This 207-nucleotide RNA was probed chemically with 2A3. Conditions: 150 mM KOAc, 10 mM MgCl2 and 150 mM bicine (pH 8.5), 24 C. Values cover nucleotides 27 to 156. The data come from the RNA Mapping Database (RMDB), library M2RFPK.
[RMDB]
RNA sequence: GGGAACGACUCGAGUAGAGUCGAAAAAUCUUUAAGCAGAUGGCAGGUUCAACCCGUACGGUGCGGAAGUUCGCGCUUCCGUGAAACGCGAAAAUCGGACGGUGGCUGCAAGUCGCAUCGCAAAACCUAUAGCUUGUUAGGUUCGCCUAACAAGCAAGUCCCCAUAGUUGUUCGCAACUAUGGGGACAAAAGAAACAACAACAACAAC
Reactivity to 2A3 in 0.01 (KOAc 150mM, MgCl2 10mM, bicine 150mM(pH8.5), 24C), signal-to-noise 1, nucleotides 027 to 156: a010u080c040u050u110u070a070a000g010c040a030g000a100u090g010g000c000a000g010g030u070u180c010a030a000c030c000c000g000u000a000c000g020g020u010g020c020g040g000a040a020g050u100u280c110g010c050g010c010u020u000c000c000g000u000g030a010a070a040c120g040c010g020a030a030a000a030u030c000g010g010a000c000g020g070u040g060g030c020u040g010c040a050a020g040u100c030g020c050a030u020c030g050c090a090a030a020a090c010c020u090a020u090a220g010c000u000u010g000u000u000a010g020g010u020u000c070g040c040c000u010a000a000c010a000a000g030c000a000a000